This 177-nucleotide RNA was probed chemically with DMS.
For DMS the reverse transcriptase was MarathonRT.
Conditions: 150 mM KOAc, 10 mM MgCl2 and 150 mM bicine (pH 8.5), 24 C.
The data come from the RNA Mapping Database (RMDB), library M2PK90.
Reactivities are given for positions 27 through 126.
[RMDB]
RNA sequence: GGGAACGACUCGAGUAGAGUCGAAAAGUUGCCCGAGAAGAGAUCACACAGAUGAGUCACAAGGAGCGAUGUCUCAUCACUUGGUUUUCGACAAGUGACGAGUCGUUCCCAAAAUCGCUCCAAUGAAGACUAUUUAAACCUUCGGGUUUAAAUAGUCAAAAGAAACAACAACAACAAC
Reactivity to DMS in 0.01 (KOAc 150mM, MgCl2 10mM, bicine 150mM(pH8.5), 24C), signal-to-noise 2, nucleotides 027 to 126: g000u000u000g010c190c000c000g000a090g010a130a090g000a200g010a100u010c080a100c140a120c180a120g020a020u000g010a030g000u000c000a040c170a080a070g030g000a010g000c020g020a030u000g000u000c020u030c020a010u000c010a170c040u000u020g020g000u010u010u010u000c030g000a050c020a080a070g010u000g020a040c010g000a000g000u000c010g000u000u000c000c000c000a020a020a060a030u000c030g010c010u000c010c000a110a070u000g010a140a080